Overview:
An RNA of 207 nucleotides, treated with 2A3 and read out base by base. The 2A3 profile rests on 759 reads. The RNA was probed in 150 mM KOAc, 10 mM MgCl2 and 150 mM bicine (pH 8.5) at 24 C.
RNA sequence: GGGAACGACUCGAGUAGAGUCGAAAAGCGGGCGGUCCCGGGCGCAUAAGGAGCGGUAUACGGCUCAGGGCCGAAAGGCAGCAGGCAAAAGCCUCCGCGCGGUGCAGUGGCCGGAUAGCGCUUGCGAGUUGUCGCUCACCCACUGCCUCUCUGAUACGAGAAUUAACGAGUUCGCUCGUUAAUUCUCAAAAGAAACAACAACAACAAC
Reactivity to 2A3 in 0.01 (KOAc 150mM, MgCl2 10mM, bicine 150mM(pH8.5), 24C), signal-to-noise 1, nucleotides 027 to 156: g090c050g010g000g000c000g000g000u100c060c080c020g000g000g000c010g000c000a020u010a060a100g050g000a010g020c030g050g000u040a030u000a040c070g010g000c010u000c060a040g050g040g020c000c020g000a090a030a020g100g000c050a050g090c050a000g020g000c010a090a080a100a300g000c000c010u000c000c010g020c000g040c010g010g000u090g040c090a170g080u070g100g000c000c000g030g000a020u020a010g060c010g030c000u010u080g170c040g020a080g050u080u010g100u180c060g010c030u050c010a070c000c020c000a020c050u040g000c020c000u020c000u000c020u070g010a040u000a250c100